RNA sequence: GGGAACGACUCGAGUAGAGUCGAAAACGAUGACUUUGUGAACUUAACAGUUAAUCCGGAGGGAACAUCGGAGAGAUCCACAGUCCCGCCUCCGGCACCCGUUGAUGCAGGACUGUUGUCGAAAGUCCAUCUACGAAUAAUUCGUUAUUCGUAGAUGAAAAGAAACAACAACAACAAC
Reactivity to 2A3 in 0.01 (KOAc 150mM, MgCl2 10mM, bicine 150mM(pH8.5), 24C), signal-to-noise 7, nucleotides 027 to 126: c030g060a110u100g020a010c010u040u060u070g140u070g060a060a030c020u080u090a090a010c010a030g030u040u130a080a050u050c000c000g010g010a000g020g020g020a080a080c020a070u150c050g010g000a060g000a000g000a100u040c050c020a040c020a060g060u010c040c040c000g070c000c010u000c000c000g000g000c010a050c010c040c010g070u090u180g110a120u220g030c080a020g030g020a010c010u010g010u030u040g020u020c010g030a080a010a010g000u010c010
Reactivity to DMS in 0.01 (KOAc 150mM, MgCl2 10mM, bicine 150mM(pH8.5), 24C), signal-to-noise 9, nucleotides 027 to 126: c080g010a100u010g010a040c020u000u000u000g010u010g020a070a080c090u000u000a040a040c050a030g000u000u000a130a130u010c020c010g000g000a020g000g000g000a080a040c070a080u000c290g010g010a040g000a190g000a150u000c020c020a110c280a150g000u000c020c030c050g000c050c000u000c000c010g010g010c180a050c070c030c060g010u000u010g010a080u010g010c100a080g010g000a060c020u000g000u000u000g010u000c020g010a040a040a030g000u000c020
This 177-nucleotide RNA was probed chemically with 2A3 and DMS. The DMS profile rests on 31,689 reads. 2A3 adducts were read by reverse transcription with SuperScript II with manganese. Conditions: 150 mM KOAc, 10 mM MgCl2 and 150 mM bicine (pH 8.5), 24 C.